[RMDB]
An RNA of 207 nucleotides, treated with 2A3 and DMS and read out base by base. For 2A3 the reverse transcriptase was SuperScript II with manganese.
RNA sequence: GGGAACGACUCGAGUAGAGUCGAAAAAUACACCAGCAGUAGGACUCAGCGACCGUCACAACAAGGUUGUGCUGGUAUCCGACGGUCUUAUAGCCCUGUCUUGCAGGUUGCCUUGCACUGACGUGCCACACCAUUUACAGAUUCGUCUGUAAAUGAAUCUAUCGAAUGCGUUCGCGCAUUCGAUAGAAAAAGAAACAACAACAACAAC
Reactivity to 2A3 in 0.01 (KOAc 150mM, MgCl2 10mM, bicine 150mM(pH8.5), 24C), signal-to-noise 3, nucleotides 027 to 156: a020u120a010c060a030c030c010a020g030c030a040g050u080a020g080g030a060c010u040c120a010g070c020g040a000c010c000g080u050c050a020c010a090a140c070a220a120g140g020u030u030g080u080g000c040u040g010g040u020a070u030c040c030g000a000c020g010g000u000c020u010u120a150u140a050g010c030c010c010u000g000u030c080u070u120g000c020a020g060g030u080u130g080c020c030u050u090g010c040a040c080u070g050a010c080g010u080g050c010c000a110c000a020c000c010a000u000u000u010a000c010a000g040a040u020u090c180g100u000c090u000g030u000a000a000a000u000g000a000a040
Reactivity to DMS in 0.01 (KOAc 150mM, MgCl2 10mM, bicine 150mM(pH8.5), 24C), signal-to-noise 1, nucleotides 027 to 156: a120u000a130c080a220c060c010a080g030c060a010g010u000a010g010g010a030c000u020c070a110g050c160g000a020c000c000g000u000c020a150c050a040a080c040a070a100g040g050u000u000g060u000g010c010u000g040g040u000a100u020c090c000g000a040c020g010g010u000c020u020u000a170u000a060g000c020c010c010u000g000u000c030u000u010g000c060a080g000g000u000u040g020c020c100u010u000g000c030a090c000u000g060a080c100g020u000g000c030c050a080c080a100c140c000a010u000u000u000a010c010a000g000a070u000u000c300g000u010c000u000g030u010a000a000a020u000g000a120a090
Source: RMDB library M2RFPK, as collected in RNAgym. The RNA was probed in 150 mM KOAc, 10 mM MgCl2 and 150 mM bicine (pH 8.5) at 24 C. Values cover nucleotides 27 to 156. For 2A3, 1,956 sequencing reads were counted.